An RNA of 170 nucleotides, treated with 2A3 and DMS and read out base by base. Source: RMDB library 15KLIB, as collected in RNAgym. For DMS the reverse transcriptase was MarathonRT. The 2A3 profile rests on 41,751 reads. Conditions: 150 mM KOAc, 10 mM MgCl2 and 150 mM bicine (pH 8.5), 24 C.
RNA sequence: GGGAACGACUCGAGUAGAGUCGAAAAGGUUUGGCAUGUUGAGCGUAAAGACGUUCCAUAUCCUAAGCAAUCUAUUUUUACUAUUAAUAGUGUGGUCCAAAAGGAUGGUGUUGAAAACACUCCUCCUCGAGCACAAAGUUCGCUUUGUGCAAAAGAAACAACAACAACAAC
Reactivity to 2A3 in 0.01 (KOAc 150mM, MgCl2 10mM, bicine 150mM(pH8.5), 24C), signal-to-noise 9, nucleotides 027 to 129: g060g000u030u030u040g020g000c050a010u040g020u030u050g040a020g020c060g030u080a080a100a060g180a070c010g000u010u000c010c000a010u020a030u060c010c010u050a030a020g020c010a030a070u030c020u050a120u050u070u030u070u070a140c100u050a060u280u080a070a070u040a060g060u050g040u060g110g030u040c020c010a050a050a050a040g030g010a030u130g030g020u030g020u020u090g080a060a050a020a000c040a010c010u020c010c000u010c000c010u040c060g060a030
Reactivity to DMS in 0.01 (KOAc 150mM, MgCl2 10mM, bicine 150mM(pH8.5), 24C), signal-to-noise 9, nucleotides 027 to 129: g040g030u000u030u040g000g000c150a020u000g030u020u020g000a050g040c050g040u030a070a080a110g040a080c030g000u000u000c020c020a060u000a050u000c070c050u030a040a030g020c020a060a050u020c060u000a040u020u030u030u050u050a110c090u020a100u010u030a030a020u020a040g030u000g030u000g050g030u000c060c070a020a090a100a040g010g000a010u000g000g000u000g000u000u040g040a090a050a060a070c080a000c000u020c000c010u020c010c000u030c100g000a120